[RMDB]
RNA sequence: GGGAACGACUCGAGUAGAGUCGAAAAGAUCGGCGCAAGGGCUGGCGGCGUGCCGUCGCAGCGCGACACGCAAACGCGCCUGCAGCUCGCCAAUGCCGAAUGGCUUGCUCAGGUAAUCAUCAGCUCCUCAGUCAGCACUAUUCGUAGUGCUGACUGAAAAAGAAACAACAACAACAAC
Reactivity to 2A3 in 0.01 (KOAc 150mM, MgCl2 10mM, bicine 150mM(pH8.5), 24C), signal-to-noise 5, nucleotides 027 to 126: g060a080u080c030g030g000c030g020c100a100a190g040g030g000c010u020g030g020c020g040g000c040g000u020g000c030c010g020u040c060g020c120a110g050c040g000c010g050a010c010a010c030g020c010a090a080a010c020g010c010g000c020c000u020g020c020a010g000c010u030c020g010c010c010a070a080u200g050c020c000g050a060a090u050g000g000c000u000u060g000c010u000c020a000g010g060u080a090a070u090c070a020u050c010a010g020c010u030c020c010
Reactivity to DMS in 0.01 (KOAc 150mM, MgCl2 10mM, bicine 150mM(pH8.5), 24C), signal-to-noise 2, nucleotides 027 to 126: g010a120u000c090g000g020c000g020c170a210a130g000g000g000c010u000g000g020c080g020g000c000g020u000g030c050c020g000u020c120g040c160a090g020c130g020c000g020a000c070a060c120g010c120a070a110a300c110g000c000g000c010c020u000g000c110a000g000c000u000c040g040c010c040a040a070u020g000c170c030g000a100a120u010g010g000c000u000u020g000c000u000c010a010g020g020u000a150a030u000c120a060u020c010a020g000c040u010c050c120
Conditions: 150 mM KOAc, 10 mM MgCl2 and 150 mM bicine (pH 8.5), 24 C. Structure probing data (2A3 and DMS) for a 177-nucleotide construct. For 2A3 the reverse transcriptase was SuperScript II with manganese. The data come from the RNA Mapping Database (RMDB), library OK1LIB. DMS adducts were read by reverse transcription with MarathonRT.